[RMDB]
RNA sequence: GGGAACGACUCGAGUAGAGUCGAAAAGAUAUGGAAUGGAACUACAGGUGCUCCUUCGAAGAACUCGGAAACGAGGGAGAAGAACCACCUGCCAUUCCUAAGUCAAACCUUCAGUUCGCUGAAGGAAGGCGUAAGGAAAGUUCGCUUUCCUUACGCCAAAAGAAACAACAACAACAAC
Reactivity to 2A3 in 0.01 (KOAc 150mM, MgCl2 10mM, bicine 150mM(pH8.5), 24C), signal-to-noise 1, nucleotides 027 to 126: g020a010u020a030u090g000g000a010a000u010g020g010a080a090c050u160a050c300a000g060g020u020g040c040u050c020c000u050u220c090g260a280a060g060a190a070c020u000c040g000g000a040a040a000c030g020a000g050g000g070a060g000a040a000g040a050a030c020c010a010c000c010u000g010c000c000a000u000u000c010c000u000a030a000g010u000c040a130a100a160c000c000u040u000c010a000g030u040u070c200g010c120u000g000a000a020g000g020a000a040
Reactivity to DMS in 0.01 (KOAc 150mM, MgCl2 10mM, bicine 150mM(pH8.5), 24C), signal-to-noise 1, nucleotides 027 to 126: g030a020u000a300u000g010g000a010a030u000g020g000a060a000c080u000a300c010a000g000g030u000g000c290u000c080c000u020u010c000g030a200a200g000a180a300c000u000c000g010g000a040a160a220c000g040a000g040g010g010a020g030a040a010g000a030a100c300c000a000c000c000u000g000c000c000a000u000u000c000c000u000a000a010g040u000c060a100a030a080c030c010u000u020c000a000g050u000u000c220g010c030u000g020a000a020g010g060a040a060

The record gives the reactivity of an RNA of 177 nucleotides to 2A3 and DMS. The reactions ran in a buffer of 150 mM KOAc, 10 mM MgCl2 and 150 mM bicine (pH 8.5), at 24 C. Values are in units of 0.01, from 0 to 300, in steps of 10. For 2A3, 1,520 sequencing reads were counted.